[RMDB]
RNA sequence: GGGAACGACUCGAGUAGAGUCGAAAAGACGGCACCCAGCUGGAAACUUCCUGCACCCGUUUCGCCGUGGUCUGGCAGGGCAAGGAAGUGUGGGUCCAGCAAGCCGGCAACGGCCAGUUGCUGAUCAAUUUAUGAUAAAUUUCGAUUUAUCAUAAAUAAAAGAAACAACAACAACAAC
Reactivity to 2A3 in 0.01 (KOAc 150mM, MgCl2 10mM, bicine 150mM(pH8.5), 24C), signal-to-noise 7, nucleotides 027 to 126: g030a000c020g000g000c010a010c010c010c010a030g000c000u010g010g010a040a050a010c010u010u010c000c000u010g010c060a080c000c010c010g060u080u200u240c100g010c000c010g070u100g080g270u120c140u120g000g000c010a030g010g000g000c020a020a020g000g010a010a020g000u010g010u040g050g060g040u000c000c000a000g000c010a000a000g000c000c000g010g000c020a040a040c010g030g000c010c010a050g070u110u040g000c010u020g010a130u060c020a030
Reactivity to DMS in 0.01 (KOAc 150mM, MgCl2 10mM, bicine 150mM(pH8.5), 24C), signal-to-noise 9, nucleotides 027 to 126: g010a080c030g010g010c010a090c030c010c030a190g010c010u000g000g000a060a210a040c010u000u000c000c000u000g010c150a300c010c000c010g010u010u010u020c170g010c010c000g010u010g010g010u010c130u010g010g020c000a210g000g010g020c120a300a040g000g000a010a010g010u000g020u010g030g010g010u000c000c000a010g010c000a160a170g000c020c000g010g000c210a060a100c010g010g000c020c100a120g010u000u000g010c010u000g000a120u000c040a100